[RMDB]
RNA sequence: GGGAACGACUCGAGUAGAGUCGAAAAAGAAAGAGAUCGCAGCUGCGAAAGAGGACGCGUAGGAUCCGAAAUACUCGAAGCAGCUAACCGGAAAACGGAAGGAUCCAUCCCAAAGCCAUCAAAAAAACCCUAUUUACAUGUUCGCAUGUAAAUAGGGAAAAGAAACAACAACAACAAC
Reactivity to DMS in 0.01 (KOAc 150mM, MgCl2 10mM, bicine 150mM(pH8.5), 24C), signal-to-noise 2, nucleotides 027 to 126: a100g000a150a090a100g000a130g020a030u020c040g010c150a050g020c010u000g000c000g000a070a150a230g000a080g030g000a140c150g010c100g010u010a110g000g000a100u010c110c000g010a040a050a060u000a300c000u000c040g000a100a140g020c000a000g010c010u010a070a080c000c000g020g000a100a020a100a060c020g000g010a140a090g000g010a050u010c010c010a120u010c000c000c000a010a100a170g000c150c100a000u050c030a010a000a060a130a110a070a130
Reactivity to 2A3 in 0.01 (KOAc 150mM, MgCl2 10mM, bicine 150mM(pH8.5), 24C), signal-to-noise 2, nucleotides 027 to 126: a010g090a040a040a010g130a010g010a020u050c040g000c130a020g020c010u010g000c000g040a130a130a040g010a000g020g010a010c040g020c020g040u060a100g150g050a100u060c040c010g030a020a060a050u220a060c020u020c040g040a040a010g000c000a000g000c000u010a010a050c000c010g030g040a080a300a030a090c030g000g010a010a030g140g000a010u000c000c010a050u030c010c010c000a000a000a040g060c070c000a060u130c130a050a020a030a020a070a150a170